[RMDB]
RNA sequence: GGGAACGACUCGAGUAGAGUCGAAAAUAUAAAUGGCUCCUCAUAAAUAAAGUUGAUCGAGUCUAGCAAGCUGAUGUCCUGUACUCUAAUUACCAUGUGCACAGAGUUAAGUUAGCAUAUUCUCUCCUCUCACAGCCAAAUACCUCAAAAAUAUUCAUAGUCAUGAUACUUUCGAGUAUCAUGACUAAAAAGAAACAACAACAACAAC
Reactivity to 2A3 in 0.01 (KOAc 150mM, MgCl2 10mM, bicine 150mM(pH8.5), 24C), signal-to-noise 3, nucleotides 027 to 156: u130a000u020a010a100a060u030g010g000c000u010c000c010u010c020a070u080a220a130a040u110a100a140a020g070u090u070g040a080u080c060g010a000g050u000c010u020a010g020c070a100a020g000c030u060g030a060u060g020u010c020c010u030g040u090a060c030u020c010u030a110a110u080u050a080c060c040a050u140g040u040g040c020a030c010a070g060a020g040u060u040a090a010g040u020u040a020g000c010a040u040a170u180u020c040u000c000u020c030c000u020c000u000c000a030c000a040g060c020c000a070a040a040u090a090c010c030u100c090a040a050a030a060a030u140a110u100u090c080a050
Reactivity to DMS in 0.01 (KOAc 150mM, MgCl2 10mM, bicine 150mM(pH8.5), 24C), signal-to-noise 2, nucleotides 027 to 156: u010a090u010a080a140a130u020g010g010c030u000c020c020u000c060a100u010a030a080a170u000a090a100a190g020u010u000g010a090u010c050g000a080g030u010c030u000a170g050c000a060a150g010c050u010g020a110u010g030u000c040c030u000g040u000a060c050u010c030u000a110a100u000u010a110c060c020a130u000g030u010g000c040a110c100a080g010a130g000u000u000a060a070g010u000u010a110g020c030a140u010a090u000u000c040u000c000u000c010c030u000c030u000c040a060c050a090g020c030c000a060a070a090u000a040c030c060u030c060a010a050a110a050a110u000a100u010u000c050a230
The record gives the reactivity of an RNA of 207 nucleotides to 2A3 and DMS. 2A3 adducts were read by reverse transcription with SuperScript II with manganese. The 2A3 profile rests on 1,886 reads. The DMS profile rests on 2,687 reads. Values cover nucleotides 27 to 156. The RNA was probed in 150 mM KOAc, 10 mM MgCl2 and 150 mM bicine (pH 8.5) at 24 C.